Annotation:
Structure probing data (DMS) for a 177-nucleotide construct.
RNA sequence: GGGAACGACUCGAGUAGAGUCGAAAAGAUAUGGAGCACGGGAGACCGAUGGUCGGAAACGACCAUCUUUGGGUCGAAGAACGUGAACUACUCCUAAGUCAAAUCGGACGUCUUCGGACGUCCGAAAGCUGCUACAUAUCUUCGGAUAUGUAGCAGCAAAAGAAACAACAACAACAAC
Reactivity to DMS in 0.01 (KOAc 150mM, MgCl2 10mM, bicine 150mM(pH8.5), 24C), signal-to-noise 1, nucleotides 027 to 126: g000a040u000a130u010g010g010a040g070c040a020c010g000g000g000a120g010a000c000c010g010a050u000g000g030u000c010g000g010a020a060a160c010g000a000c010c000a010u000c010u000u000u000g060g000g010u010c010g060a070a170g020a120a180c000g010u000g020a120a050c160u010a250c040u000c000c010u000a020a130g010u010c020a080a140a170u000c020g040g000a080c030g010u000c010u010u000c280g020g000a020c000g000u000c000c000g000a000a040a060